This 170-nucleotide RNA was probed chemically with 2A3 and DMS. 2A3 adducts were read by reverse transcription with SuperScript II with manganese. In probing experiments dimethyl sulfate is read out at A N1 and C N3, which are open when not base-paired. The RNA was probed in 150 mM KOAc, 10 mM MgCl2 and 150 mM bicine (pH 8.5) at 24 C.
[RMDB]
RNA sequence: GGGAACGACUCGAGUAGAGUCGAAAAGGACUCGGACGCGAACCCGUGAGUGGAACCUUGGUCUUUUAUUGGGGGGUACACUCGAGGAGUGGAAGGCGGGGAGGCGGGGUUCCCGGGCUUACCUACGUGAGUCACGCGUUCGCGCGUGACAAAAGAAACAACAACAACAAC
Reactivity to 2A3 in 0.01 (KOAc 150mM, MgCl2 10mM, bicine 150mM(pH8.5), 24C), signal-to-noise 3, nucleotides 027 to 129: g080g020a040c030u000c040g000g040a000c000g030c010g050a030a020c070c000c000g060u030g020a010g000u170g000g010a040a030c080c000u000u000g070g050u130c040u090u240u050u090a220u200u090g010g000g000g000g000g010u030a050c040a020c020u040c020g040a120g010g070a010g010u150g020g040a100a050g050g020c070g020g000g000g020a070g020g000c080g000g000g020g010u000u000c030c010c000g000g000g000c030u030u010a040c040c070u040a000c050g060u060g050a020
Reactivity to DMS in 0.01 (KOAc 150mM, MgCl2 10mM, bicine 150mM(pH8.5), 24C), signal-to-noise 1, nucleotides 027 to 129: g010g040a060c030u020c080g000g050a000c010g090c050g120a040a120c000c000c000g040u020g080a030g040u050g000g000a110a060c020c030u040u000g080g020u050c080u000u000u000u000a210u000u000g000g000g000g000g000g000u060a160c100a050c070u070c070g000a090g030g000a110g030u070g010g030a210a090g050g000c110g000g000g000g000a060g010g030c000g000g000g010g000u000u040c040c020c000g030g010g000c090u050u040a010c030c150u020a150c140g010u030g020a060